RNA sequence: GGGAACGACUCGAGUAGAGUCGAAAAGACUUGUGGUUCGCCACAAGUCAAAUAAGCAUGUAGAAAUGGCCAAACUACAUGCAUCGAAAGAAACGCCAUAAAAAAGGACAUGCUUCGGCAUGUCCAACUCUUUGUUCCGGUUCGCCGGAACAAAGAGAAAAGAAACAACAACAACAAC
Reactivity to 2A3 in 0.01 (KOAc 150mM, MgCl2 10mM, bicine 150mM(pH8.5), 24C), signal-to-noise 1, nucleotides 027 to 126: g000a010c000u000u000g000u040g030g010u000u040c190g070c080c000a000c000a010a010g000u000c000a000a000a000u020a010a030g040c000a000u000g020u010a000g010a000a290a030u060g020g080c030c050a020a040a020c010u000a010c000a000u000g060c000a060u080c060g200a060a120a100g050a020a240a030c110g050c070c000a010u170a080a110a030a080a000a020g020g000a000c000a000u010g020c040u030u090c190g130g030c000a000u000g010u000c000c000a000a000